Source information
Chemical mapping of a 170-nucleotide RNA with DMS and 2A3. For DMS the reverse transcriptase was MarathonRT. For 2A3, 112,504 sequencing reads were counted.
RNA sequence: GGGAACGACUCGAGUAGAGUCGAAAAGUCUUCCGGAGCUCCGCCUCGAGUUCCUCCGCUUUCUUUCUUCCACUCACCCACUUCUCGAGAAUAUCUUCUCUUCCAUCGCGCUUCUUCUUCGAUUCGGCUAGCUUAUCGUUCGCGAUAAGCAAAAGAAACAACAACAACAAC
Reactivity to DMS in 0.01 (KOAc 150mM, MgCl2 10mM, bicine 150mM(pH8.5), 24C), signal-to-noise 9, nucleotides 027 to 129: g000u020c050u000u000c020c030g000g000a130g020c020u020c050c070g040c060c020u000c020g000a110g020u020u020c030c010u000c040c060g020c080u050u040u000c000u020u000u020c040u020u030c030c040a030c050u030c060a130c040c020c020a050c080u010u000c030u030c040g030a080g010a110a100u060a110u050c080u010u000c030u000c050u010u010c020c030a070u030c030g030c050g030c070u020u020c030u000u000c030u000u000c040g020a160u010u000c000g020g020c060u030a080
Reactivity to 2A3 in 0.01 (KOAc 150mM, MgCl2 10mM, bicine 150mM(pH8.5), 24C), signal-to-noise 9, nucleotides 027 to 129: g020u010c020u080u030c050c010g030g010a020g010c010u020c020c020g060c010c020u030c040g010a030g010u040u030c000c000u020c010c020g020c030u050u060u020c000u020u060u010c000u050u010c020c010a050c020u040c010a080c010c020c010a050c030u100u020c020u030c030g060a050g040a080a070u110a090u130c040u060u010c000u020c000u060u020c010c000a060u030c030g010c010g000c030u030u010c000u030u000c000u020u030c020g060a070u020u010c010g030g010c020u020a030